[RMDB]
RNA sequence: GGGAACGACUCGAGUAGAGUCGAAAAUACCUGAUGCUUGCGUGAAUUUAGAGACUUUGAUGCAAUUAAGUGGGAUACCGACUGGAAUAUCUCAUCAACUAGGGCUAGAAUUCAAAUCAGGUCUCUGUCUCUACCACGUGUUCGCACGUGGUAGAGAAAAAGAAACAACAACAACAAC
Reactivity to DMS in 0.01 (KOAc 150mM, MgCl2 10mM, bicine 150mM(pH8.5), 24C), signal-to-noise 1, nucleotides 027 to 126: u000a170c000c000u000g000a170u000g070c000u010u010g000c060g030u010g000a000a060u100u030u000a000g010a000g040a000c000u000u040u030g000a000u020g000c220a040a060u020u000a000a210g000u020g020g020g020a000u000a120c100c010g040a190c190u040g000g010a070a030u000a040u000c000u010c000a000u030c140a070a090c040u010a070g000g000g000c040u050a030g020a110a030u010u040c030a090a200a060u000c010a060g000g000u000c040u000c000u000g050
Reactivity to 2A3 in 0.01 (KOAc 150mM, MgCl2 10mM, bicine 150mM(pH8.5), 24C), signal-to-noise 2, nucleotides 027 to 126: u080a010c000c000u000g040a010u090g060c090u060u190g080c020g090u070g120a080a070u040u100u080a080g010a000g000a030c000u210u190u180g060a060u010g000c060a050a070u110u040a260a000g000u060g000g080g000a000u020a020c020c070g120a250c260u210g000g000a030a100u000a000u010c020u000c020a030u060c000a000a080c100u160a010g020g200g000c000u000a030g010a130a000u140u000c040a160a150a000u000c000a010g040g000u010c030u000c000u000g050

This 177-nucleotide RNA was probed chemically with DMS and 2A3. For DMS the reverse transcriptase was MarathonRT. For DMS, 1,412 sequencing reads were counted. For 2A3 the reverse transcriptase was SuperScript II with manganese. DMS (dimethyl sulfate) methylates the pairing face of unpaired adenines and cytosines. Values cover nucleotides 27 to 126.